Structure probing data (2A3) for a 177-nucleotide construct. It was measured as part of the RMDB library M2PK50.
RNA sequence: GGGAACGACUCGAGUAGAGUCGAAAAGCGAUAGCGUUCGCGCUAUCGCAAAUAAAUUCAGCGGUUUAAAUUUCGAGGCCAUAACCGCUGAUGGCCUCCAAAAAACUCGACAGUUCGCUGUCGAGAAGAUUGAAGACAGCUUCGGCUGUCUUCAAUCAAAAGAAACAACAACAACAAC
Reactivity to 2A3 in 0.01 (KOAc 150mM, MgCl2 10mM, bicine 150mM(pH8.5), 24C), signal-to-noise 1, nucleotides 027 to 126: g030c000g000a000u010a000g000c000g010u020u040c150g000c010g030c160u000a000u000c000g000c000a020a020a020u020a000a010a030u120u040c010a000g000c020g050g140u140u240u300a100a150a100u300u300u280c150g020a010g000g000c000c000a020u020a120a120c020c000g020c010u000g000a000u000g010g000c000c000u000c000c000a000a300a080a020a000a040c020u020c000g000a000c000a020g060u050u060c120g050c100u000g000u020c000g000a000g000a000a040